An RNA of 177 nucleotides, treated with 2A3 and DMS and read out base by base. Source: RMDB library OK2TST, as collected in RNAgym. 2A3 adducts were read by reverse transcription with SuperScript II with manganese. For DMS the reverse transcriptase was MarathonRT.
RNA sequence: GGGAACGACUCGAGUAGAGUCGAAAAAUCACCUGAACUUUGCCGGAUUUAACAUCGGCUUCAGAGAUAAUGCCUUUCACGCCACCAUAGUGGUCGGUGUGGCUGUGAGUGUAGAUAACGGCAACAACAUGCCGAUACGUUUCGACGUAUCGGCAUGAAAAGAAACAACAACAACAAC
Reactivity to 2A3 in 0.01 (KOAc 150mM, MgCl2 10mM, bicine 150mM(pH8.5), 24C), signal-to-noise 2, nucleotides 027 to 126: a010u040c030a060c030c010u020g030a050a050c060u090u170u110g000c000c000g110g030a120u110u010u190a130a060c020a070u050c030g060g000c000u030u040c010a010g020a000g000a010u110a120a050u110g020c020c000u050u160u060c010a000c010g030c000c000a010c010c020a050u080a150g180u140g110g030u010c060g000g020u060g000u020g020g000c030u070g000u020g040a100g050u130g050u090a020g030a110u090a140a090c010g000g000c000a020a020c010a000a000
Reactivity to DMS in 0.01 (KOAc 150mM, MgCl2 10mM, bicine 150mM(pH8.5), 24C), signal-to-noise 2, nucleotides 027 to 126: a060u010c090a110c060c010u000g010a030a130c290u020u010u000g030c000c040g010g010a110u000u000u030a110a090c200a080u010c020g010g070c010u000u010c110a030g010a140g020a040u010a000a050u000g010c000c000u000u000u000c020a000c010g000c000c000a010c020c010a140u000a160g010u010g010g010u000c060g010g000u000g010u000g000g020c090u000g010u000g010a060g010u000g010u000a040g020a030u010a060a110c060g020g010c030a060a030c230a040a150